[RMDB]
RNA sequence: GGGAACGACUCGAGUAGAGUCGAAAAUAAGGGCGGCUCGGCGGAGUAAAGCCUGCAACGCAGUCCGUUGGGGGCUCGCCACGUGUGACUGCUGCGUUCGAGCCUCUGGUCCGUGCGGCUAAGGUGCGCAUGGGACCGGCUUCGGCCGGUUCCAUGUAAAAGAAACAACAACAACAAC
Reactivity to DMS in 0.01 (KOAc 150mM, MgCl2 10mM, bicine 150mM(pH8.5), 24C), signal-to-noise 5, nucleotides 027 to 126: u050a090a100g000g010g020c090g000g020c010u000c030g000g000c020g000g000a070g000u010a080a120a080g010c030c010u000g000c040a060a140c070g010c150a110g000u040c090c010g000u010u010g010g000g010g000g000c010u000c050g030c060c080a050c010g000u020g010u010g010a100c190u020g000c010u000g010c020g000u000u030c010g010a030g000c000c000u010c010u010g000g010u010c020c020g020u010g010c040g000g000c040u010a070a080g000g010u010g010c100
Reactivity to 2A3 in 0.01 (KOAc 150mM, MgCl2 10mM, bicine 150mM(pH8.5), 24C), signal-to-noise 5, nucleotides 027 to 126: u190a040a020g030g030g000c030g000g020c010u000c020g020g000c010g030g040a050g040u080a020a050a040g030c000c010u030g060c000a030a010c060g020c040a010g060u030c020c000g010u030u080g040g020g000g000g010c010u010c010g000c020c010a070c000g080u140g020u040g040a040c040u040g010c010u040g020c010g010u030u190c010g000a000g000c000c000u000c000u010g020g000u000c000c020g010u040g020c020g010g000c020u030a020a060g060g010u040g020c040
Annotation: This 177-nucleotide RNA was probed chemically with DMS and 2A3. For 2A3 the reverse transcriptase was SuperScript II with manganese.